RNA sequence: GGGAACGACUCGAGUAGAGUCGAAAACUCUUAUUUAGACCUAUGCAAUAGGAUUUUAGGGUAACGCUUCAGGGUAGGAAUACAGCAGAGUCCCCUAAUUUCUUGUGUGCCUUAGCCAUCUGAAUAGGAGAAACGUAAGUCCGUUCGCGGACUUACGCAUCCAUCACGAGUUCGCUCGUGAUGGAUGAAAAGAAACAACAACAACAAC
Reactivity to DMS in 0.01 (KOAc 150mM, MgCl2 10mM, bicine 150mM(pH8.5), 24C), signal-to-noise 1, nucleotides 027 to 156: c010u020c000u000u000a030u000u000u000a010g000a000c030c000u000a020u020g020c060a130a060u010a020g000g040a030u000u000u000u000a040g000g000g010u020a030a040c070g010c030u000u000c070a190g000g020g040u000a030g030g050a160a270u000a010c000a160g030c110a100g030a060g020u010c090c020c000c000u000a020a020u000u000u000c000u000u000g020u000g030u000g080c060c120u010u000a060g010c030c050a080u010c020u010g020a020a010u000a010g010g000a050g000a040a020a150c000g000u000a000a020g000u000c000c000g000u000u000c300g040c030g000g000a030c000u000u020a000c000g040
Reactivity to 2A3 in 0.01 (KOAc 150mM, MgCl2 10mM, bicine 150mM(pH8.5), 24C), signal-to-noise 2, nucleotides 027 to 156: c000u010c000u000u000a000u000u000u010a000g010a010c000c000u000a010u000g010c000a020a020u000a030g020g000a000u000u010u010u010a010g010g000g020u050a150a040c070g010c030u060u060c070a040g080g040g000u030a020g010g120a120a150u070a050c020a020g020c010a010g030a000g080u100c010c000c000c000u000a000a000u000u010u000c030u030u020g020u020g040u060g040c000c020u000u000a000g020c020c040a030u000c010u000g000a000a000u000a010g020g010a000g000a070a080a000c010g000u000a000a000g000u000c010c000g010u050u060c280g000c020g060g000a000c000u000u000a000c000g000